[RMDB]
RNA sequence: GGGAACGACUCGAGUAGAGUCGAAAAAUUAUGUUUAUCGUGACAUCCAACACCUUUCUGGUGGUGAACAGCAGAGGGUUUGGAUUGCCAUGGCCCUUGCCCAGGAUACAGAUAUUAUUUUUUUAGAGUGCAGUGAUACGUUCGCGUAUCACUGCACAAAAGAAACAACAACAACAAC
Reactivity to 2A3 in 0.01 (KOAc 150mM, MgCl2 10mM, bicine 150mM(pH8.5), 24C), signal-to-noise 2, nucleotides 027 to 126: a000u120u110a160u050g210u080u070u090a210u180c020g000u020g000a000c020a000u000c000c000a000a000c020a070c040c000u030u300u050c000u000g280g020u040g000g000u090g190a200a100c060a020g040c000a000g010a000g000g000g000u000u000u000g000g000a020u000u230g000c000c000a000u000g000g060c010c010c000u000u050g060c030c020c010a000g040g040a080u180a100c070a040g190a110u030a040u150u240a300u200u220u050u010u000u000u150a060g090a000